This 177-nucleotide RNA was probed chemically with DMS and 2A3. DMS (dimethyl sulfate) methylates the pairing face of unpaired adenines and cytosines. Conditions: 150 mM KOAc, 10 mM MgCl2 and 150 mM bicine (pH 8.5), 24 C. Source: RMDB library OK2TRN, as collected in RNAgym.
RNA sequence: GGGAACGACUCGAGUAGAGUCGAAAAACUGGGUUCUAGGUUUUGUGAAGGCUGACUCGGUCUACAAGACCUAACCCAUAGACUACUAGUCGACUAGACCGAGUUAGCCUUUAGUCAUUAGUGGUCACUACUGCUUUCUAUUCGUAGAAGGCAGUAGAAAAGAAACAACAACAACAAC
Reactivity to DMS in 0.01 (KOAc 150mM, MgCl2 10mM, bicine 150mM(pH8.5), 24C), signal-to-noise 9, nucleotides 027 to 126: a090c060u000g010g010g010u000u000c080u000a090g010g010u000u000u000u000g020u000g010a020a010g010g010c000u000g010a030c020u000c010g000g000u000c000u000a010c030a050a250g000a010c020c070u000a040a060c040c030c050a090u000a040g010a060c060u000a050c130u000a070g010u000c040g010a230c300u000a010g000a010c000c000g010a020g010u000u000a030g010c000c000u000u000u000a020g010u000c040a050u000u000a040g010u000g010g010u000c060a290
Reactivity to 2A3 in 0.01 (KOAc 150mM, MgCl2 10mM, bicine 150mM(pH8.5), 24C), signal-to-noise 3, nucleotides 027 to 126: a000c030u040g010g020g000u060u050c050u060a020g020g020u010u010u040u050g050u020g020a030a010g000g000c010u010g000a060c020u010c020g000g010u000c000u030a010c000a020a000g010a010c000c010u020a020a020c000c000c000a000u070a000g010a010c010u050a010c000u010a050g020u030c080g010a010c010u010a000g010a000c000c000g000a000g020u030u040a000g000c000c000u010u000u010a010g000u000c000a010u020u040a030g040u020g050g010u010c010a000